[RMDB]
RNA sequence: GGGAACGACUCGAGUAGAGUCGAAAAGAGGUGCAUGGCCGUCGUCAGUUCGUACCGUGAGGCGUCCUGUUAAGUCAGGCAACGAGCGAGACCCAUUUCCACUGUUGCUAACGACUCCGCGAGGAGGUAAAACAGGCCUUUUCGAAGGCCUGUUUUAAAAAGAAACAACAACAACAAC
Reactivity to DMS in 0.01 (KOAc 150mM, MgCl2 10mM, bicine 150mM(pH8.5), 24C), signal-to-noise 4, nucleotides 027 to 126: g000a100g010g000u020g000c100a030u000g010g010c080c030g020u010c060g010u030c070a100g000u030u010c040g000u000a180c050c020g010u030g000a110g020g010c150g000u020c020c010u020g000u010u020a060a110g040u010c020a030g000g000c150a120a050c030g000a060g020c050g020a120g000a050c080c030c040a150u010u020u010c040c040a090c060u000g020u000u010g000c060u020a060a100c080g000a110c010u000c010c000g000c240g010a190g000g000a040g000g040
Reactivity to 2A3 in 0.01 (KOAc 150mM, MgCl2 10mM, bicine 150mM(pH8.5), 24C), signal-to-noise 2, nucleotides 027 to 126: g070a030g030g050u030g000c040a040u060g040g000c020c000g030u040c020g040u010c010a050g020u030u070c000g050u060a080c040c020g050u090g100a090g030g000c000g000u120c000c000u020g000u100u100a150a190g230u040c000a000g020g010c020a010a010c030g020a030g030c000g020a020g000a010c000c000c010a030u080u030u020c020c040a020c050u030g030u050u010g010c000u020a080a050c020g030a060c020u040c020c020g010c060g020a030g000g000a000g000g050

The record gives the reactivity of an RNA of 177 nucleotides to DMS and 2A3.